[RMDB]
RNA sequence: GGGAACGACUCGAGUAGAGUCGAAAAAGCUGGGGGUGCUGCCAGCCCUGCCAGGUUCUCCUAGGAGGCGGCAGCUCAUAUGGCUGUGGGAGGAGGCAGAGGGAGCCUCAUAUGCACCCACAUUUCCAGGGAUCUAGAAGACAGAAGGAGGAAAACCUCUAGACGUACAUUUCGAUGUACGUCUAGAAAAAGAAACAACAACAACAAC
Reactivity to 2A3 in 0.01 (KOAc 150mM, MgCl2 10mM, bicine 150mM(pH8.5), 24C), signal-to-noise 1, nucleotides 027 to 156: a000g030c050u070g000g000g020g040g010u070g010c010u000g020c030c000a130g000c050c010c010u070g190c000c000a020g030g000u090u180c160u050c060c030u070a110g010g000a020g010g000c000g000g000c040a000g000c000u030c020a200u120a080u050g070g020c030u030g020u020g030g000g000a030g020g000a010g000g000c030a040g030a080g040g030g010a000g000c000c060u030c000a040u090a100u240g090c040a030c010c130c010a020c000a030u110u080u040c040c010a040g000g030g010a000u010c020u140a060g010a060a020g070a050c010a020g090a150a010g000g010a010g050g010a010a080a030a030c010c000